[RMDB]
RNA sequence: GGGAACGACUCGAGUAGAGUCGAAAACUUUGGACGGUAAUUUCAGAACAGAGGUUGAUCCCGACCUAUCUGCUUUCUAUGUUAAGGAUGGUAAAUACUUUACAAGUGAACCACCCGUAACAUAUUCACAACGAGGCGUUCGCGCCUCGUAAAAGAAACAACAACAACAAC
Reactivity to 2A3 in 0.01 (KOAc 150mM, MgCl2 10mM, bicine 150mM(pH8.5), 24C), signal-to-noise 2, nucleotides 027 to 129: c070u150u080u080g020g030a010c040g010g060u140a030a170u200u150u030c060a000g010a030a020c000a070g070a000g050g020u000u040g000a010u020c000c000c000g020a010c000c020u030a040u010c000u020g030c040u010u080u000c020u030a040u010g000u000u000a030a060g000g000a000u000g000g000u010a170a140a010u130a000c000u020u070u020a050c050a040a000g000u000g000a040a000c000c000a010c000c000c000g010u000a000a000c000a010u030a050u110u080c070a070c050a030
Reactivity to DMS in 0.01 (KOAc 150mM, MgCl2 10mM, bicine 150mM(pH8.5), 24C), signal-to-noise 4, nucleotides 027 to 129: c030u080u040u090g030g070a090c060g040g050u050a040a050u000u000u000c030a050g000a100a170c180a130g020a060g030g020u020u020g060a090u020c000c000c000g030a070c020c000u070a080u010c090u040g030c160u020u020u070c060u140a020u020g010u010u020a020a120g140g030a080u000g010g010u010a000a000a000u040a030c030u010u020u080a080c240a100a070g010u020g010a170a000c020c000a000c040c000c030g040u050a050a000c000a070u000a050u060u030c140a050c000a090
About this RNA: Chemical mapping of a 170-nucleotide RNA with 2A3 and DMS. For DMS the reverse transcriptase was MarathonRT. The DMS profile rests on 6,633 reads. Conditions: 150 mM KOAc, 10 mM MgCl2 and 150 mM bicine (pH 8.5), 24 C.